Source: RMDB library POS240, as collected in RNAgym. This 307-nucleotide RNA was probed chemically with 2A3. 2A3 is a SHAPE reagent: it acylates the 2'-hydroxyl of flexible nucleotides of all four kinds. For 2A3 the reverse transcriptase was SuperScript II with manganese. The reactions ran in a buffer of 150 mM KOAc, 10 mM MgCl2 and 150 mM bicine (pH 8.5), at 24 C.

[RMDB]
RNA sequence: GGGAACGACUCGAGUAGAGUCGAAAAGGCUUGCGUGAGCAAGCCAGUUGAUCUACGGAUCAACACGCCUGACUUCGGUCAGGCGAAUAUAAAUCAUACAAAAUAAACAACGGUCUACGGACCGUUGAGGACCGCUUCGGCGGUCCACGUGUCGGUGACGACACGAGAUAAAGAAAACGAUUAAAGAGAUCGGUGACGAUCUCAGAAUACAUCUACGGAUGUAUUCAAGAGGUUCGAAUCCUCCCUAACCCCGGGUAGGGGCCCAAAAUGUAUCAUUCGUGAUACAUAAAAGAAACAACAACAACAAC
Reactivity to 2A3 in 0.01 (KOAc 150mM, MgCl2 10mM, bicine 150mM(pH8.5), 24C), signal-to-noise 1, nucleotides 027 to 266: g000g000c010u000u010g030c060g030u100g050a060g010c000a000a000g000c000c000a000g000u000u000g000a000u000c010u020a150c300g090g020a010u000c000a000a000c060a020c040g000c020c000u000g000a000c000u020u110c200g070g000u000c000a000g000g000c000g000a000a000u010a000u060a050a100a030u060c040a020u110a300c050a040a220a160a150u300a170a140a000c020a000a000c000g000g000u000c020u050a150c270g140g050a000c010c000g000u000u000g000a000g000g000a000c010c000g010c000u030u150c300g100g000c020g000g000u000c000c000a000c000g000u000g000u010c040g000g100u150g070a030c000g000a000c000a000c000g030a020g050a050u280a080a100a010g090a000a040a040a020c040g000a070u230u150a080a090a180g030a000g000a000u000c000g090g000u090g080a120c010g000a000u000c020u000c000a000g000a000a000u000a000c000a000u030c040u000a020c150g080g010a000u000g000u000a000u000u010c000a000a030g010a000g000g020u000u040c010g050a010a040u030c000c000u170c040c000c030u080a100a080c050c050c030c050g020g010g000u120a070g050g030g020g090c000c000c000a090a100a020